[RMDB]
The data come from the RNA Mapping Database (RMDB), library OK1LIB. Structure probing data (DMS) for a 177-nucleotide construct. Reactivities are rounded to 0.1 and cut off at 0 and 3. The RNA was probed in 150 mM KOAc, 10 mM MgCl2 and 150 mM bicine (pH 8.5) at 24 C. For DMS, 823 sequencing reads were counted.
RNA sequence: GGGAACGACUCGAGUAGAGUCGAAAAACUGUAUUUGGAUGAACUAGCGAGGCCUGUCCCAAAGCCCCGUCCUGCAAAGCAGCCAAAACCCCAACCAGUAAAGGAUUUAGCAGGACGGAAAGUGAUGUAUUAAGGCCGUCUUCGGACGGCCUUAAUAAAAAGAAACAACAACAACAAC
Reactivity to DMS in 0.01 (KOAc 150mM, MgCl2 10mM, bicine 150mM(pH8.5), 24C), signal-to-noise 1, nucleotides 027 to 126: a060c050u060g000u040a200u000u000u040g020g010a090u030g020a050a090c040u000a210g010c040g000a160g020g000c040c110u050g030u000c000c000c000a190a120a060g000c260c100c000c000g000u000c090c000u010g040c000a090a150a100g000c070a060g000c050c010a200a030a070a010c170c020c000c010a150a170c070c100a070g000u000a060a100a070g000g000a100u000u000u000a210g110c000a000g000g000a040c000g020g000a000a000a010g000u000g010a120u020g000